[RMDB]
RNA sequence: GGGAACGACUCGAGUAGAGUCGAAAAAUAAAGCGUAAUCGCAUCCCAGUUGCAAAGAGCAGCGUAAAGGCGAAAGCCGAACUCAAGAUCGCAUCGGGCUAAGAUGCGAUCGUAGCCACGCAAAAAACAAAUAGUCAUCGUUCGCGAUGACUAUUUGAAAAGAAACAACAACAACAAC
Reactivity to DMS in 0.01 (KOAc 150mM, MgCl2 10mM, bicine 150mM(pH8.5), 24C), signal-to-noise 4, nucleotides 027 to 126: a060u000a070a080a100g030c000g030u000a140a150u010c060g010c010a150u000c000c000c020a150g020u010u020g000c080a060a100a060g010a160g030c040a050g010c080g010u010a030a070a140g010g010c010g000a080a050a140g010c000c010g000a090a070c080u000c060a100a110g000a000u010c000g010c000a000u000c000g020g030g060c240u010a090a100g000a010u010g000c000g010a000u000c010g000u010a060g020c100c100a050c080g000c050a000a020a050a050a060a070
Reactivity to 2A3 in 0.01 (KOAc 150mM, MgCl2 10mM, bicine 150mM(pH8.5), 24C), signal-to-noise 2, nucleotides 027 to 126: a010u110a020a080a000g030c020g040u080a140a090u190c040g000c050a030u020c030c000c030a010g110u080u130g000c050a070a140a080g100a090g020c040a020g000c010g110u130a140a040a050g020g010c020g020a050a010a000g010c020c030g010a060a010c040u080c090a070a090g000a020u010c010g000c010a000u000c020g000g100g110c090u150a100a030g010a020u000g020c000g000a010u000c000g000u010a000g000c020c020a040c000g020c000a060a030a020a060a000a030

Source: RMDB library M2PK90, as collected in RNAgym. An RNA of 177 nucleotides, treated with DMS and 2A3 and read out base by base. Values cover nucleotides 27 to 126. For DMS the reverse transcriptase was MarathonRT. The RNA was probed in 150 mM KOAc, 10 mM MgCl2 and 150 mM bicine (pH 8.5) at 24 C.